An RNA of 177 nucleotides, treated with DMS and 2A3 and read out base by base. For 2A3, 2,004 sequencing reads were counted.
RNA sequence: GGGAACGACUCGAGUAGAGUCGAAAAUUAGAGGUCUCGAUCACAGCGAGACCGGGAGAGACGCUCCCGGGCCGGGUUAGGAACCGGUGCGGCGCGUGGUAUAGGAGCCGGCCGGACCCGGGGAUAAUCUAUCUAUCGAAUUCGUUCGAUAGAUAGAAAAAGAAACAACAACAACAAC
Reactivity to DMS in 0.01 (KOAc 150mM, MgCl2 10mM, bicine 150mM(pH8.5), 24C), signal-to-noise 4, nucleotides 027 to 126: u010u000a110g010a140g010g010u010c010u000c000g000a080u010c150a130c280a170g000c020g000a030g000a020c000c010g010g010g000a120g000a190g010a060c110g010c050u000c010c000c000g020g000g030c010c000g000g000g010u000u000a120g010g010a100a160c010c000g000g020u010g010c020g010g000c050g000c070g020u000g020g010u010a090u010a130g000g010a250g020c010c000g010g010c000c000g010g010a080c010c000c000g000g020g000g010a050u000a050a100
Reactivity to 2A3 in 0.01 (KOAc 150mM, MgCl2 10mM, bicine 150mM(pH8.5), 24C), signal-to-noise 2, nucleotides 027 to 126: u160u070a030g010a020g120g020u000c000u000c010g030a150u260c040a040c080a120g090c020g000a020g010a010c010c000g000g000g000a070g000a000g000a000c040g010c070u010c000c000c000g040g050g000c000c010g000g000g040u060u140a120g150g060a060a050c020c000g010g080u170g170c010g040g030c050g000c020g040u140g040g080u240a190u120a230g090g060a030g020c000c030g020g000c020c010g000g020a030c000c010c010g000g040g000g000a030u080a080a050